[RMDB]
RNA sequence: GGGAACGACUCGAGUAGAGUCGAAAACCCACGUGGUUCGCCACGUGGGAAAUAAAUUCAGCGGUAAUUCGAGGCCAAAUAUUACCGCUGAUCGCCUCGAAAAAAGUACACAGUUCGCUGUGUACAACCAAUAGAGAUGCUUCGGCAUCUCUAUUGGAAAAGAAACAACAACAACAAC
Reactivity to DMS in 0.01 (KOAc 150mM, MgCl2 10mM, bicine 150mM(pH8.5), 24C), signal-to-noise 2, nucleotides 027 to 126: c010c000c000a000c010g030u000g000g000u000u010c240g040c000c000a000c010g000u000g000g000g000a010a010a020u000a060a060a040u000u000c000a010g000c000g010g000u000a000a000u000u010c220g000a130g010g010c090c100a090a100a110u010a060u000u000a000c000c000g000c010u000g000a000u000c170g010c040c010u010c260g020a000a040a060a090a130a120g000u000a010c000a000c000a020g020u000u000c230g020c010u000g000u000g020u000a010c000a080a060
Reactivity to 2A3 in 0.01 (KOAc 150mM, MgCl2 10mM, bicine 150mM(pH8.5), 24C), signal-to-noise 3, nucleotides 027 to 126: c000c000c000a000c000g000u010g000g080u030u050c240g070c080c000a000c000g010u020g000g000g000a020a050a000u090a010a150a030u060u010c000a000g000c010g010g010u020a020a010u070u110c120g080a110g200g080c080c020a020a130a020u170a010u020u000a010c000c000g000c010u000g000a000u010c010g030c000c000u050c040g080a180a080a010a000a000a020g000u010a000c000a000c010a010g000u040u080c140g020c100u000g000u000g000u010a000c000a000a010